[RMDB]
RNA sequence: GGGAACGACUCGAGUAGAGUCGAAAAAGACGGAAACCCAUCGACUGUCACCAGAUGCUGCAUCACCUGAUCACUGAUGGCUCAACGGUAUCCGGCGGUACAACUGAAUACUUGUAGCUGCCUUUGGAAAAGGAGUUCAUCUUCGGAUGAACUCCAACUACAACCAUCCCUUCGGGGAUGGUUGUAGAAAAGAAACAACAACAACAAC
Reactivity to 2A3 in 0.01 (KOAc 150mM, MgCl2 10mM, bicine 150mM(pH8.5), 24C), signal-to-noise 2, nucleotides 027 to 156: a030g050a000c080g020g060a050a070a020c050c030c010a010u050c090g140a100c050u070g000u050c030a010c040c010a050g040a100u080g020c050u060g040c060a020u050c010a030c040c020u020g040a080u080c010a020c080u050g020a010u020g030g000c000u030c070a070a090c040g030g020u050a030u050c020c030g020g000c000g000g000u000a010c000a010a040c030u190g040a150a060u160a160c030u030u000g020u050a060g110c010u000g010c000c020u080u110u100g050g020a020a040a080a150g000g000a000g000u000u000c000a000u000c000u030u020c200g030g000a000u000g000a000a000c000u000c000c000a000a000